[RMDB]
RNA sequence: GGGAACGACUCGAGUAGAGUCGAAAAAGGGCGAAUGGGAAGCGCCGACCUCGACGCCUCACGGGCUGGAGAUGGUUCCGGUCAUCCCGAUCUCGAACCGGACCCGGCUGUCGGACCUGUACGGGACUUCGGAGAUCUCCCCGGAGCUGCGGUCGGUUAGUCUUUCAUCAUUCGUGAUGAAAGACUAAAAAGAAACAACAACAACAAC
Reactivity to 2A3 in 0.01 (KOAc 150mM, MgCl2 10mM, bicine 150mM(pH8.5), 24C), signal-to-noise 1, nucleotides 027 to 156: a010g040g000g010c020g020a090a010u110g020g020g000a040a050g040c010g000c050c000g010a050c000c010u000c030g040a020c030g000c010c020u040c030a160c080g040g000g000c100u140g030g050a040g000a050u130g020g080u030u040c030c000g020g000u040c020a060u030c030c020c010g010a100u020c020u010c030g050a120a080c030c000g090g000a090c050c010c000g050g050c080u120g140u250c020g030g060a140c030c000u080g010u130a100c080g000g030g030a020c050u060u050c090g040g000a100g020a100u040c020u040c080c000c010c010g010g000a010g000c070u080g020c040g020g000u010c020g000g000u010
Reactivity to DMS in 0.01 (KOAc 150mM, MgCl2 10mM, bicine 150mM(pH8.5), 24C), signal-to-noise 1, nucleotides 027 to 156: a060g000g020g050c050g010a060a090u010g010g070g030a080a060g000c050g010c020c000g060a050c020c030u010c050g020a170c040g020c050c000u000c030a130c120g050g000g050c010u030g070g010a070g020a110u000g020g000u000u030c020c000g040g000u000c080a190u020c000c050c010g000a060u010c040u020c000g020a130a090c060c030g020g010a130c040c000c090g050g020c050u010g030u000c010g030g010a120c060c010u020g030u000a160c080g020g030g000a030c080u000u000c040g030g000a110g010a120u030c110u000c040c000c000c020g040g000a090g010c020u000g020c090g020g010u000c020g000g040u000